[RMDB]
RNA sequence: GGGAACGACUCGAGUAGAGUCGAAAAGGGGUCUUUCGCCUGUGUGCUAAGACAGUCCAUUGUCAGCUAUACUGAAGCCUCCACGGUAUAGCUUGGAUUUAUGGAUCGAGCACACGCGCGAAAGACGGAGGCACCCAAAUCCUACUUCGGUAGGAAAGUCCUUCACAUUCUUCGGAAUGUGAAGGACAAAAGAAACAACAACAACAAC
Reactivity to 2A3 in 0.01 (KOAc 150mM, MgCl2 10mM, bicine 150mM(pH8.5), 24C), signal-to-noise 1, nucleotides 027 to 156: g040g000g000g000u010c000u010u010u000c020g000c070c040u010g020u000g000u010g000c000u140a220a020g030a040c010a060g060u010c000c000a000u030u090g140u060c050a010g010c000u000a010u000a020c000u000g030a050a030g010c000c000u010c000c000a050c040g010g000u000a000u000a010g010c030u000u070g120g000a070u080u180u230a020u020g010g010a010u030c050g030a000g000c000a010c000a000c000g010c040g020c000g020a000a000a000g000a010c000g000g000a000g000g000c000a070c000c000c000a040a120a010u010c000c000u010a020c010u040u110c300g120g000u000a010g000g000a070a000a000